About this RNA
Chemical mapping of a 207-nucleotide RNA with 2A3. It was measured as part of the RMDB library RNAMAK. For 2A3 the reverse transcriptase was SuperScript II with manganese. The RNA was probed in 150 mM KOAc, 10 mM MgCl2 and 150 mM bicine (pH 8.5) at 24 C.
[RMDB]
RNA sequence: GGGAACGACUCGAGUAGAGUCGAAAAGCGUACUACUUGAUGAAGUCAGGCAACAGCUGUAGCGCAUUUCGUCCCAAAUAGGACGAUUCAACUACAGACAUGCCUGUCCCAUCAAGUAUCGCAAAGCAUAGAGUCUCGUUCGCGAGACUCUAUGCAAGAGAUAUUGGGGCUUCGGCCCCAAUAUCUCAAAAGAAACAACAACAACAAC
Reactivity to 2A3 in 0.01 (KOAc 150mM, MgCl2 10mM, bicine 150mM(pH8.5), 24C), signal-to-noise 1, nucleotides 027 to 156: g020c000g010u060a100c010u010a000c000u020u000g010a010u020g050a100a140g020u050c000a000g000g000c000a020a070c020a300g020c000u000g000u000a000g000c030g000c070a020u000u020u010c020g010u040c030c040c010a140a200a130u300a130g000g000a000c010g000a000u050u070c090a070a000c000u000a000c000a040g130a210c030a100u040g000c000c000u000g000u000c020c000c000a000u000c000a000a000g030u060a070u170c000g020c000a070a070a070g000c000a000u000a000g000a000g000u000c000u010c000g050u110u120c210g020c000g100a000g010a000c000u020c000u010a000u000g020c000a000a000